[RMDB]
The record gives the reactivity of an RNA of 207 nucleotides to 2A3 and DMS. The data come from the RNA Mapping Database (RMDB), library M2RFPK. For 2A3 the reverse transcriptase was SuperScript II with manganese. Reactivities are given for positions 27 through 156.
RNA sequence: GGGAACGACUCGAGUAGAGUCGAAAACGCACUCGCAGCUUAAUAACCUGCGCUGAGCCCUUCUCCCCCAGCUUGCCUGUGUCCCAGGGAAUUGGAAGGUCAUCCUUCACAGGAUCGUGUGGAAGUCAUUACUCGUGAGUGUUCGCACUCACGAGAAGAUAAUAAGGGCGUUCGCGCCCUUAUUAUCAAAAGAAACAACAACAACAAC
Reactivity to 2A3 in 0.01 (KOAc 150mM, MgCl2 10mM, bicine 150mM(pH8.5), 24C), signal-to-noise 1, nucleotides 027 to 156: c040g020c000a080c000u000c020g010c040a000g000c000u030u070a050a000u000a060a160c000c010u000g060c020g050c280u090g030a040g040c000c100c000u300u030c190u220c030c000c010c000c000a010g010c000u080u170g050c010c010u000g010u020g020u030c080c020c010a000g040g000g010a070a060u090u040g000g000a050a020g040g000u060c040a100u060c020c000u030u030c020a020c000a070g030g010a070u050c120g010u000g000u030g120g080a020a020g000u030c020a020u070u250a090c010u000c000g000u000g000a010g000u030g000u040u020c120g020c120a030c010u000c020a000c020g000a000g000a000a000
Reactivity to DMS in 0.01 (KOAc 150mM, MgCl2 10mM, bicine 150mM(pH8.5), 24C), signal-to-noise 2, nucleotides 027 to 156: c040g040c030a090c050u000c060g000c050a000g010c050u020u010a210a100u000a100a080c290c020u000g000c030g020c180u010g020a040g020c040c020c060u000u000c070u000c000c010c010c030c020a100g000c050u010u010g030c000c030u000g020u000g000u000c010c000c010a300g010g050g020a060a150u000u000g010g010a100a070g020g010u020c110a100u000c000c020u000u000c040a100c060a110g020g000a070u010c080g000u000g010u010g010g020a060a130g010u000c030a080u010u000a200c040u000c000g030u020g000a040g000u010g030u010u030c300g010c000a080c040u000c000a010c020g000a000g020a030a040